RNA sequence: GGGAACGACUCGAGUAGAGUCGAAAAAGACAGCCAUAAGCCAACUGGAUGAUGGCCUUUCUGUGGUCACAAUUCUUUGUCAUUGUGGAUUAUGGCAUGACUUAAAUAAGCGUAGUCCAGUUAGGUAGAUAUCAUCGUCAUUCGUGACGAUGAUAUCAAAAGAAACAACAACAACAAC
Reactivity to 2A3 in 0.01 (KOAc 150mM, MgCl2 10mM, bicine 150mM(pH8.5), 24C), signal-to-noise 5, nucleotides 027 to 126: a010g070a030c040a010g080c010c010a060u060a130a020g010c000c000a030a020c040u030g020g000a010u030g030a080u040g020g010c020c020u060u160u040c120u130g200u090g020g000u010c010a010c010a030a110u180u070c060u140u160u110g080u070c050a100u070u100g030u050g050g070a050u060u060a080u160g010g000c010a020u030g010a020c000u030u040a070a160a140u200a130a030g030c020g040u030a010g030u020c000c010a020g020u040u040a080g000g020u030a040
Reactivity to DMS in 0.01 (KOAc 150mM, MgCl2 10mM, bicine 150mM(pH8.5), 24C), signal-to-noise 6, nucleotides 027 to 126: a070g010a100c120a070g010c010c030a070u010a060a070g010c010c010a050a070c040u000g010g010a020u000g000a180u010g010g010c010c010u000u010u010c140u010g000u000g020g010u000c040a030c100a060a060u010u000c110u000u000u010g010u010c190a100u010u000g030u000g010g000a060u010u000a020u000g000g010c010a050u010g010a080c030u000u010a070a070a080u010a060a080g000c070g000u000a130g010u000c000c020a040g000u010u000a070g030g010u010a090